[RMDB]
RNA sequence: GGGAACGACUCGAGUAGAGUCGAAAAGCGUACUACCACGGAGGAAUCGCGUUUGACGUUAUUCUUUGUACCCUUCCCAAAUAGGAAGGGUGGGGUAACCGAGCGAUUCUCCCCACCCGUGGUAUCGCAAACUCGACUUGCUUCGGCAAGUCGAGAAGAUACAGGCGCAGUUCGCUGCGCCUGUAUCAAAAGAAACAACAACAACAAC
Reactivity to 2A3 in 0.01 (KOAc 150mM, MgCl2 10mM, bicine 150mM(pH8.5), 24C), signal-to-noise 1, nucleotides 027 to 156: g020c000g010u100a130c080u000a020c040c000a020c020g010g000a010g030g000a000a000u000c010g000c050g110u220u210u240g110a080c030g000u040u020a030u110u110c080u080u140u200g160u150a020c000c000c000u000u030c070c010c010a250a300a120u240a090g000g000a010a030g000g000g000u010g000g000g000g000u000a010a000c020c030g040a030g000c000g000a000u000u000c020u050c000c000c010c010a050c020c000c000g030u000g000g000u000a020u030c030g000c000a060a060a070c000u010c000g000a000c000u010u000g030c010u040u020c240g090g010c000a000a000g000u000c000g000a000g000a000a000